[RMDB]
Source: RMDB library OK3TST, as collected in RNAgym.
An RNA of 207 nucleotides, treated with 2A3 and read out base by base.
For 2A3 the reverse transcriptase was SuperScript II with manganese.
The 2A3 profile rests on 652 reads.
Reactivities are rounded to 0.1 and cut off at 0 and 3.
RNA sequence: GGGAACGACUCGAGUAGAGUCGAAAACGGCGGGGCCUUCAACUGGGGCAGCAUCUGGAGCGGGCUGAAGAGUUUCGGCUCCACGGUGAAAAAUUACGGUAGCAAGGCGUGGAACAGCACCACCGGGCAGAUGCUUCGCGACAAGCUUAAGGACACGUCAGAUUAGUGCAUUCGUGCACUAAUCUGAAAAAGAAACAACAACAACAAC
Reactivity to 2A3 in 0.01 (KOAc 150mM, MgCl2 10mM, bicine 150mM(pH8.5), 24C), signal-to-noise 1, nucleotides 027 to 156: c010g000g040c020g000g020g010g020c000c000u040u110c070a120a070c090u060g000g000g020g020c020a030g070c000a020u040c010u010g000g060a060g000c130g020g040g000c030u030g020a030a020g120a060g090u090u120u150c040g090g000c000u020c050c000a010c050g000g020u030g110a090a110a000a000a000u130u090a050c040g040g000u050a020g010c100a100a060g030g000c090g000u030g010g020a060a030c020a030g070c000a020c000c000a010c020c000g000g010g000c030a010g000a000u000g040c010u170u180c080g020c010g060a060c000a070a060g020c010u040u020a010a030g000g030a050c040a000c060g030